[RMDB]
RNA sequence: GGGAACGACUCGAGUAGAGUCGAAAAUUCGCUCCGUGAUACGGCUUCCGAGUACGGGCUGGAUGCGACCGCUGUCGUUCGAGAAGGCAUCCCUGCGCAGGAAAUCGUGGCGUAUGCUGACGACCACGCGGUCGAUGCGAUCACUAUCGGAACGUCCGUCUGUCCACCUAUUCGUAGGUGGACAGACAAAAGAAACAACAACAACAAC
Reactivity to 2A3 in 0.01 (KOAc 150mM, MgCl2 10mM, bicine 150mM(pH8.5), 24C), signal-to-noise 1, nucleotides 027 to 156: u060u020c030g010c050u000c000c050g080u170g050a120u090a150c070g010g000c020u040u080c000c020g010a010g080u130a100c090g000g000g000c040u020g100g110a060u220g060c020g000a000c000c000g000c040u020g000u000c030g000u010u170c080g040a060g000a290a010g040g030c000a030u000c010c000c000u010g000c020g040c080a120g040g290a090a050a160u190c000g080u070g010g010c070g010u080a020u010g000c020u020g050a020c000g000a000c030c000a010c140g000c000g000g030u000c000g000a000u040g080c000g010a060u020c000a010c150u040a150u060c010g020g020a010a000c090g090u040c000c010
Conditions: 150 mM KOAc, 10 mM MgCl2 and 150 mM bicine (pH 8.5), 24 C.
The record gives the reactivity of an RNA of 207 nucleotides to 2A3.
Values cover nucleotides 27 to 156.
For 2A3 the reverse transcriptase was SuperScript II with manganese.
Reactivities are rounded to 0.1 and cut off at 0 and 3.